Annotation: Chemical mapping of a 177-nucleotide RNA with 2A3 and DMS. 2A3 adducts were read by reverse transcription with SuperScript II with manganese. Values cover nucleotides 27 to 126.
RNA sequence: GGGAACGACUCGAGUAGAGUCGAAAAUUACAAUUUGUAAGUUUGCCAGAGUAAGGUGUAGCUUCUUAUCCAUAUGAUUAGAUUCCUAACAUGAUAAUCAUUUUGACGAAGUCUACGACAACUUUAUACUCAUUAUCCGUUUCGACGGAUAAUGAGUAAAAGAAACAACAACAACAAC
Reactivity to 2A3 in 0.01 (KOAc 150mM, MgCl2 10mM, bicine 150mM(pH8.5), 24C), signal-to-noise 5, nucleotides 027 to 126: u100u070a060c060a070a170u070u170u300g040u050a020a050g040u020u130u170g140c010c020a060g010a030g150u080a110a050g070g050u080g010u010a000g010c000u010u000c020u150u150a020u030c030c000a000u010a000u050g010a000u010u030a020g090a100u090u110c050c030u130a130a100c060a100u140g040a090u040a010a010u000c010a010u010u060u050u000g010a020c030g020a000a000g020u000c000u020a000c010g050a020c040a020a000c020u000u050u030a260u040
Reactivity to DMS in 0.01 (KOAc 150mM, MgCl2 10mM, bicine 150mM(pH8.5), 24C), signal-to-noise 2, nucleotides 027 to 126: u010u020a040c030a120a210u010u020u040g010u000a020a030g000u020u000u010g030c030c000a170g000a130g040u000a030a110g020g050u010g030u000a010g010c010u000u000c000u000u050a230u020c020c040a000u000a000u000g000a010u000u000a010g000a230u010u000c090c060u030a100a150c260a050u020g050a180u000a000a000u000c000a010u000u000u000u000g000a070c160g010a010a030g000u000c010u000a010c000g000a030c140a050a110c030u000u000u010a080u010